[RMDB]
An RNA of 177 nucleotides, treated with DMS and 2A3 and read out base by base. Values cover nucleotides 27 to 126. The RNA was probed in 150 mM KOAc, 10 mM MgCl2 and 150 mM bicine (pH 8.5) at 24 C. It was measured as part of the RMDB library TTRINS.
RNA sequence: GGGAACGACUCGAGUAGAGUCGAAAAGAUAUGGACAGGCCUCGGAUAGCUGCUCUAUAGAACUACCUGCAUUCUCGGAAACGAGAGGGCAGGCUAUAGAGCAGUGCGGAGUGCCUGUCCUAAGUCAGUAUUAAGAAAAGUUCGCUUUUCUUAAUACAAAAGAAACAACAACAACAAC
Reactivity to DMS in 0.01 (KOAc 150mM, MgCl2 10mM, bicine 150mM(pH8.5), 24C), signal-to-noise 4, nucleotides 027 to 126: g010a060u000a300u000g000g000a020c010a020g010g010c020c000u000c020g000g010a210u000a250g020c000u000g000c000u000c000u000a010u000a010g000a150a080c180u020a300c010c000u000g000c000a070u000u000c000u000c000g000g000a110a110a170c000g020a030g000a020g010g000g010c000a000g000g000c000u000a010u000a000g000a020g010c000a000g010u000g010c100g010g010a020g010u030g020c000c010u000g000u000c000c000u000a010a080g010u010c040a180
Reactivity to 2A3 in 0.01 (KOAc 150mM, MgCl2 10mM, bicine 150mM(pH8.5), 24C), signal-to-noise 4, nucleotides 027 to 126: g010a040u060a040u160g010g000a000c010a000g020g000c010c020u060c120g210g070a210u260a210g040c010u000g010c000u000c000u010a020u010a030g040a250a190c150u140a100c300c000u010g010c010a040u040u020c000u000c010g030g040a100a080a060c000g000a010g000a000g020g030g000c000a000g000g010c000u000a010u000a000g000a000g010c000a000g000u000g000c020g110g020a010g020u220g010c000c010u000g000u000c000c000u000a000a000g000u000c000a010